[RMDB]
Source information: An RNA of 177 nucleotides, treated with 2A3 and DMS and read out base by base. The RNA was probed in 150 mM KOAc, 10 mM MgCl2 and 150 mM bicine (pH 8.5) at 24 C. For DMS the reverse transcriptase was MarathonRT. For 2A3, 1,366 sequencing reads were counted.
RNA sequence: GGGAACGACUCGAGUAGAGUCGAAAAACAUUAGCAUGUCUGCCUUCGGGAAGAACAACCAGCGAUCGACAGCCUCGGCUCUCCUUUCUCAGGGUAGAGAGGCCAUUGCAGAAGAGCGAGUGAUGGAGUCUGUCUAUCCAUUCGUGGAUAGACAGACAAAAGAAACAACAACAACAAC
Reactivity to 2A3 in 0.01 (KOAc 150mM, MgCl2 10mM, bicine 150mM(pH8.5), 24C), signal-to-noise 1, nucleotides 027 to 126: a010c030a060u100u120a030g010c070a040u070g060u000c020u060g060c040c000u060u050c060g040g000g050a050a080g060a140a070c040a030a050c050c010a030g030c040g020a040u030c030g070a070c000a030g030c000c000u060c020g060g060c000u000c030u050c030c000u000u090u000c100u000c070a070g000g100g000u130a010g020a000g000a010g030g000c060c000a130u070u160g000c000a010g000a150a020g040a050g090c020g020a000g050u040g050a050u110g080g000a060
Reactivity to DMS in 0.01 (KOAc 150mM, MgCl2 10mM, bicine 150mM(pH8.5), 24C), signal-to-noise 2, nucleotides 027 to 126: a130c080a020u000u010a110g030c040a040u000g000u000c030u000g010c030c070u000u000c110g030g000g010a080a020g010a140a160c140a110a040c030c020a080g010c080g000a050u000c080g000a090c090a100g000c040c010u000c030g000g010c060u010c010u010c010c000u000u000u000c080u010c060a170g000g020g010u000a030g010a140g010a050g010g000c090c070a060u000u010g010c020a090g000a050a070g000a050g010c020g000a110g010u000g000a040u000g000g020a190
Source: RMDB library OK2TRN, as collected in RNAgym.